This 177-nucleotide RNA was probed chemically with DMS and 2A3. Values cover nucleotides 27 to 126. 2A3 is a SHAPE reagent: it acylates the 2'-hydroxyl of flexible nucleotides of all four kinds. Source: RMDB library OK1LIB, as collected in RNAgym. The reactions ran in a buffer of 150 mM KOAc, 10 mM MgCl2 and 150 mM bicine (pH 8.5), at 24 C.
RNA sequence: GGGAACGACUCGAGUAGAGUCGAAAAGGACAACGAGGGUGUCGAACAGCAAUCCGAUCAUGAUCGUGGUGCCGAUUUGGCCGACGACGCGUAGAUCGCUGGCCACCAUCGAGCCCAUGGUGAAGGCCUGAGGGGUAGACUUCGGUCUACCCCUCAGAAAAGAAACAACAACAACAAC
Reactivity to DMS in 0.01 (KOAc 150mM, MgCl2 10mM, bicine 150mM(pH8.5), 24C), signal-to-noise 1, nucleotides 027 to 126: g010g000a060c080a070a150c020g010a000g040g000g000u000g000u050c050g000a060a130c050a090g010c130a030a060u000c000c010g030a080u020c060a110u010g000a080u000c000g020u000g000g000u120g000c030c000g030a100u010u010u060g000g010c020c020g010a060c020g000a000c020g030c190g030u010a160g010a100u000c000g000c000u010g000g070c010c000a000c080c140a030u000c000g000a150g000c000c000c050a090u000g000g000u000g000a100a090g000g000c090
Reactivity to 2A3 in 0.01 (KOAc 150mM, MgCl2 10mM, bicine 150mM(pH8.5), 24C), signal-to-noise 3, nucleotides 027 to 126: g080g020a020c010a090a050c100g110a070g050g110g000u030g080u140c020g020a160a040c010a000g100c010a000a090u060c020c020g020a010u110c070a110u150g100a080u050c040g000u020g010g060u190g020c000c000g080a080u020u110u120g000g000c010c000g000a020c020g010a020c010g060c060g090u060a010g030a150u030c000g000c000u020g010g010c010c000a030c000c010a020u000c010g020a020g000c010c000c020a050u030g030g000u090g100a130a040g040g050c030